[RMDB]
RNA sequence: GGGAACGACUCGAGUAGAGUCGAAAAGUGCCUCAUAAUCAGUGCAGCACUGUGGAAAUGAAUAGUAUUUUGCCAUGAUUAGGAUGUCAGUCCUAGUUGAGAAAUACUGGGUUAUGUCGAGUGGCAGUGAUGCCAGUUUAUGGGCUGGCUUAUGUUCCCCAGCGCAAGAAUUCGUUCUUGCGCUGGGAAAAGAAACAACAACAACAAC
Reactivity to 2A3 in 0.01 (KOAc 150mM, MgCl2 10mM, bicine 150mM(pH8.5), 24C), signal-to-noise 2, nucleotides 027 to 156: g050u020g020c000c000u040c090a020u060a110a060u070c060a030g000u010g160c030a010g010c020a000c000u000g010u040g050g050a100a160a090u090g000a100a020u080a070g020u000a020u030u030u040u040g110c100c100a090u190g020a060u010u000a000g000g000a030u070g170u300c200a100g130u000c020c000u010a010g010u000u090g070a090g000a090a000a000u050a050c000u000g040g070g000u050u120a050u090g200u150c130g030a090g060u100g050g070c020a000g000u020g020a000u030g030c000c000a020g010u000u000u000a020u040g040g000g000c020u030g140g000c040u060u040a140u190g020u050u070c000